[RMDB]
Structure probing data (DMS and 2A3) for a 207-nucleotide construct. Reactivities are given for positions 27 through 156. The DMS profile rests on 1,614 reads. The RNA was probed in 150 mM KOAc, 10 mM MgCl2 and 150 mM bicine (pH 8.5) at 24 C.
RNA sequence: GGGAACGACUCGAGUAGAGUCGAAAAGGAGAAUGGAACCAAGUUGGAAAACACUUCUGGAUAUUAUCCAGGAGAACUUCCCCAAACUAAUGAGGCAGGCCAACAUUCAACUUCAGGAAAUACAGAGAAUGCUACAAAGAUACUCCUCAAGAAGAGACGAUCAUAGGUAUUUCGAUACCUAUGAUCGAAAAGAAACAACAACAACAAC
Reactivity to DMS in 0.01 (KOAc 150mM, MgCl2 10mM, bicine 150mM(pH8.5), 24C), signal-to-noise 1, nucleotides 027 to 156: g030g000a080g030a050a120u000g000g050a080a130c090c010a030a290g010u000u000g020g000a090a020a050a120c080a180c020u000u050c000u000g000g010a070u000a210u000u010a130u000c000c010a000g000g000a000g000a020a050c070u000u000c000c000c020c020a050a060a160c070u000a040a060u010g010a140g010g020c070a030g000g080c100c000a030a090c010a060u000u000c050a060a090c110u000u000c060a070g030g000a070a030a080u000a070c080a050g030a100g000a040a110u000g040c080u010a120c060a040a090a110g000a110u000a020c010u040c020c000u000c040a030a120g000a100a190g010a160g080a240
Reactivity to 2A3 in 0.01 (KOAc 150mM, MgCl2 10mM, bicine 150mM(pH8.5), 24C), signal-to-noise 3, nucleotides 027 to 156: g040g000a030g040a060a110u110g020g020a050a010c060c040a060a030g030u010u040g030g010a050a000a040a020c030a040c000u000u000c000u000g030g010a030u120a140u300u130a040u150c010c000a000g000g000a010g010a040a040c010u040u010c020c000c020c010a000a130a070c050u090a130a070u070g000a030g010g010c030a000g010g050c050c010a010a010c010a050u020u100c030a080a100c010u110u090c050a010g000g080a040a080a040u080a070c020a020g100a010g030a070a050u060g010c020u010a030c060a080a100a000g030a030u070a070c010u030c030c000u050c040a000a040g060a070a000g020a040g020a020